[RMDB]
RNA sequence: GGGAACGACUCGAGUAGAGUCGAAAAUGGCGUGAUCUCGGCUCACUGCACCCUCUACCUCCCAGGUUCAAGUGAUUCUCCUGCCUCAGCCUCCUGAGUAGCUGGGAUUACAGGCACCUGCCAACCGUCUAUGGGAAUACUUCGGUAUUCCCAUAGAAAAAGAAACAACAACAACAAC
Reactivity to DMS in 0.01 (KOAc 150mM, MgCl2 10mM, bicine 150mM(pH8.5), 24C), signal-to-noise 4, nucleotides 027 to 126: u000g010g020c040g030u000g010a050u000c040u000c050g010g000c030u000c060a050c030u000g010c070a090c050c020c020u010c040u010a100c050c030u000c010c000c000a080g010g010u000u000c050a050a060g010u000g010a070u000u000c040u000c030c050u000g000c020c020u000c030a040g000c070c030u000c050c030u010g000a040g010u010a030g010c010u000g000g000g010a040u000u000a020c030a050g020g010c060a070c040c030u000g010c040c030a070a110c070c060g010